[RMDB]
Chemical mapping of a 177-nucleotide RNA with 2A3 and DMS.

RNA sequence: GGGAACGACUCGAGUAGAGUCGAAAAGCUUUAUUCACUGGGGUCGACAGCUCUGGGGAGAAAAGGGAGGAUCGGAUGGGAAGAGCAAGUCCUAUGGGAAUCCGUGUUCUCCCCUUAUGUCCAGUCCGGGUAAAUUAUUGUUCGCAAUAAUUUACCCAAAAGAAACAACAACAACAAC
Reactivity to 2A3 in 0.01 (KOAc 150mM, MgCl2 10mM, bicine 150mM(pH8.5), 24C), signal-to-noise 2, nucleotides 027 to 126: g000c000u050u040u100a070u140u060c020a010c090u030g040g000g020g050u050c040g050a060c060a040g020c030u020c010u050g000g000g010g000a010g020a040a070a010a010g060g010g020a020g010g020a030u030c020g020g030a030u070g030g030g010a050a050g050a060g220c030a100a000g050u030c000c000u070a100u120g110g020g050a110a020u010c010c010g020u030g040u080u000c010u040c000c020c010c000u000u100a040u060g070u000c000c020a030g040u060c030c060
Reactivity to DMS in 0.01 (KOAc 150mM, MgCl2 10mM, bicine 150mM(pH8.5), 24C), signal-to-noise 3, nucleotides 027 to 126: g000c040u000u000u000a040u010u000c030a190c140u010g010g010g000g010u000c040g030a090c100a110g000c080u000c050u000g020g010g020g010a030g000a030a060a070a060g000g000g000a040g010g000a120u000c020g010g000a050u010g000g010g020a050a080g010a090g010c230a080a090g010u000c000c020u000a100u000g000g000g000a270a080u000c010c000g000u000g010u010u000c010u000c010c000c010c010u000u000a030u000g010u000c010c020a070g000u010c090c120

Background:
DMS adducts were read by reverse transcription with MarathonRT.